[RMDB]
RNA sequence: GGGAACGACUCGAGUAGAGUCGAAAAGAUAUGGAUCGUGGGACAUGAAUUGAUCAUGUCGGAAACGACAUGCGUAAUUCAACAGCCCAAUCCUAAGUCAAAAGUACCUCCCUUCGGGGAGGUACAAUCUAAUCACCUCGUUCGCGAGGUGAUUAGAAAAAGAAACAACAACAACAAC
Reactivity to DMS in 0.01 (KOAc 150mM, MgCl2 10mM, bicine 150mM(pH8.5), 24C), signal-to-noise 2, nucleotides 027 to 126: g000a100u000a300u000g000g000a020u000c160g010u000g040g040g010a090c110a200u000g000a000a020u010u000g020a070u000c010a000u000g000u010c000g010g000a140a090a160c010g020a000c010a000u010g000c260g000u000a030a000u000u000c020a010a120c260a220g000c000c000c010a080a040u000c000c010u010a070a100g020u010c020a050a080a140a150g010u000a000c010c000u000c000c000c010u000u000c250g010g010g000g010a000g000g020u000a000c000a030a080
Reactivity to 2A3 in 0.01 (KOAc 150mM, MgCl2 10mM, bicine 150mM(pH8.5), 24C), signal-to-noise 1, nucleotides 027 to 126: g000a020u110a060u140g040g000a010u070c190g190u300g030g000g000a020c040a170u090g040a040a060u060u020g000a030u150c030a030u010g000u010c030g000g030a030a020a010c010g000a000c000a000u010g040c080g040u070a020a030u030u030c020a010a070c070a150g010c000c000c000a000a000u010c000c010u040a180a000g030u010c030a040a000a110a100g020u000a000c000c000u000c000c010c000u000u030c280g090g000g040g000a000g030g000u000a000c000a000a000